[RMDB]
Chemical mapping of a 177-nucleotide RNA with 2A3 and DMS. The DMS profile rests on 1,112 reads. In probing experiments dimethyl sulfate is read out at A N1 and C N3, which are open when not base-paired. Conditions: 150 mM KOAc, 10 mM MgCl2 and 150 mM bicine (pH 8.5), 24 C.
RNA sequence: GGGAACGACUCGAGUAGAGUCGAAAACUUUAAGAUUCAUCACAUCGAACUUGAUACAUACAGUACAGCACCUUGAAAACAAAUUAUCUGCUAGUUCAGUAUUUUCUACUUAUAAUCACUCCCUCCCGACAUCCUAAUUGUUCGCAAUUAGGAUGUCAAAAGAAACAACAACAACAAC
Reactivity to 2A3 in 0.01 (KOAc 150mM, MgCl2 10mM, bicine 150mM(pH8.5), 24C), signal-to-noise 3, nucleotides 027 to 126: c020u130u120u170a110a060g100a140u060u040c030a060u070c040a040c010a080u070c070g000a020a040c010u060u060g050a030u030a130c010a010u110a030c010a050g080u060a020c000a020g000c010a040c020c020u050u080g020a060a100a030a020c050a010a100a060u150u040a050u070c020u040g020c060u060a010g050u070u050c020a010g060u040a110u070u080u010u020c020u010a050c020u050u140a100u100a200a100u080c040a070c040u000c010c000c000u020c000c000c000
Reactivity to DMS in 0.01 (KOAc 150mM, MgCl2 10mM, bicine 150mM(pH8.5), 24C), signal-to-noise 2, nucleotides 027 to 126: c050u010u010u010a050a110g000a090u000u010c040a070u010c040a070c130a080u000c090g000a060a070c020u010u010g000a070u000a080c100a070u000a080c040a040g000u010a030c060a050g000c000a030c020c050u000u000g000a090a060a080a070c100a020a060a050u000u000a060u000c040u000g000c100u010a110g000u000u010c040a100g000u000a050u000u000u020u000c050u000a070c060u010u000a100u000a100a070u000c050a140c070u010c010c000c000u000c010c060c140